The record gives the reactivity of an RNA of 207 nucleotides to 2A3. Reactivities are given for positions 27 through 156. For 2A3, 465 sequencing reads were counted.
RNA sequence: GGGAACGACUCGAGUAGAGUCGAAAAAUAAUAUCUAAAAUCAUCUAACUUCAGGUAAAAUAGGUUUAGUUAGGAGAAUGCUAUAUAUACUUCUGUAGAGACACUAUCAAAGUAUUUUUCAGUGUAUCUAUAAUAGGACAUUAGAGUUUGAUGAUAACCGUUUUACGUGAUUCGUCACGUAAAACGGAAAAGAAACAACAACAACAAC
Reactivity to 2A3 in 0.01 (KOAc 150mM, MgCl2 10mM, bicine 150mM(pH8.5), 24C), signal-to-noise 1, nucleotides 027 to 156: a000u100a020a040u120a060u200c010u070a140a020a100a120u000c000a020u010c000u000a000a000c000u150u080c150a050g190g000u100a080a060a080a100u110a070g000g030u030u070u120a100g010u030u100a020g020g020a040g070a070a010u080g100c000u000a060u040a020u000a010u000a270c030u070u110c070u000g010u010a000g000a000g030a060c000a000c020u050a070u170c060a100a130a030g050u040a300u030u120u000u050u030c000a000g000u030g000u000a010u000c000u020a030u000a020a200u040a100g060g000a060c060a010u120u210a000g000a000g050u050u000u000g000a000u000g000a010u010a120a120